An RNA of 177 nucleotides, treated with 2A3 and DMS and read out base by base. Source: RMDB library TTRDEL, as collected in RNAgym. Reactivities are rounded to 0.1 and cut off at 0 and 3. In probing experiments dimethyl sulfate is read out at A N1 and C N3, which are open when not base-paired. The reactions ran in a buffer of 150 mM KOAc, 10 mM MgCl2 and 150 mM bicine (pH 8.5), at 24 C. Reactivities are given for positions 27 through 126. For DMS, 3,167 sequencing reads were counted.

[RMDB]
RNA sequence: GGGAACGACUCGAGUAGAGUCGAAAAGAUAUGGAUUUACUACCCACCGAACUACUUCAAACCGUCGGAAACGACGGGUAGAAGCGAGGUAAAUCCUAAGUCAAAUCGCUCCCUUCGGGGAGCGAAACAAAGGGCUAUAGUUCGCUAUAGCCCUUUGAAAAGAAACAACAACAACAAC
Reactivity to 2A3 in 0.01 (KOAc 150mM, MgCl2 10mM, bicine 150mM(pH8.5), 24C), signal-to-noise 2, nucleotides 027 to 126: g070a030u280a170u290g000g000a010u000u020u000a010c010u130a120c010c020c100a040c040c030g050a120a080c120u230a110c010u260u060c030a260a290a190c020c010g040u000c010g010g020a120a010a000c040g000a000c000g000g000g000u010a000g000a050a010g000c010g020a040g000g000u000a000a000a000u000c000c010u020a090a000g190u180c100a080a020a250u010c000g010c000u010c000c000c000u010u030c300g050g000g000g000a020g000c020g010a000a000a000
Reactivity to DMS in 0.01 (KOAc 150mM, MgCl2 10mM, bicine 150mM(pH8.5), 24C), signal-to-noise 4, nucleotides 027 to 126: g020a100u000a150u000g000g000a030u000u000u000a010c000u010a170c020c020c040a300c150c040g000a080a040c050u010a150c000u000u000c050a010a220a300c020c000g010u000c010g000g000a060a090a160c000g010a010c000g010g000g000u010a150g020a020a020g000c040g020a080g030g020u000a000a010a000u000c000c000u010a090a090g020u010c110a050a110a140u000c010g020c010u000c000c000c000u000u000c190g020g000g010g000a000g020c000g000a000a020a140